[RMDB]
RNA sequence: GGGAACGACUCGAGUAGAGUCGAAAAAAAAGAUAUGGAGAUUAGGGAGCAGGUCAAGCCGAAGAACGCUUUCGGAAACGAAAGCGGGAGGCUUGCUACUGCGAAGAACUAAUCUCCUAAGUCAAAAUCAUAAGCUAUAGUUCGCUAUAGCUUAUGAAAAAGAAACAACAACAACAAC
Reactivity to DMS in 0.01 (KOAc 150mM, MgCl2 10mM, bicine 150mM(pH8.5), 24C), signal-to-noise 3, nucleotides 027 to 126: a110a070a080a090g010a060u000a300u000g000g010a020g010a020u000u000a000g000g000g000a110g010c010a010g000g010u010c000a010a000g010c000c000g000a080a140g010a150a190c000g010c000u000u000u000c000g010g010a100a080a150c010g000a010a000a010g010c000g000g000g000a050g010g010c000u000u000g000c130u010a170c000u000g000c000g010a080a090g000a120a170c000u000a010a010u000c000u000c000c000u000a010a090g010u000c020a080a070a120a150
Reactivity to 2A3 in 0.01 (KOAc 150mM, MgCl2 10mM, bicine 150mM(pH8.5), 24C), signal-to-noise 1, nucleotides 027 to 126: a030a000a000a070g100a040u120a060u190g000g010a060g000a000u000u010a000g000g050g000a090g000c010a000g070g040u130c010a000a010g010c000c010g120a210a000g030a030a010c000g010c020u030u020u010c000g020g000a140a060a040c010g000a000a000a000g000c000g000g000g000a010g010g020c000u000u010g000c020u170a290c000u010g010c000g060a250a080g000a020a000c010u010a000a000u000c010u000c000c000u010a070a000g020u010c020a020a000a020a300
Structure probing data (DMS and 2A3) for a 177-nucleotide construct. The reactions ran in a buffer of 150 mM KOAc, 10 mM MgCl2 and 150 mM bicine (pH 8.5), at 24 C. Values cover nucleotides 27 to 126.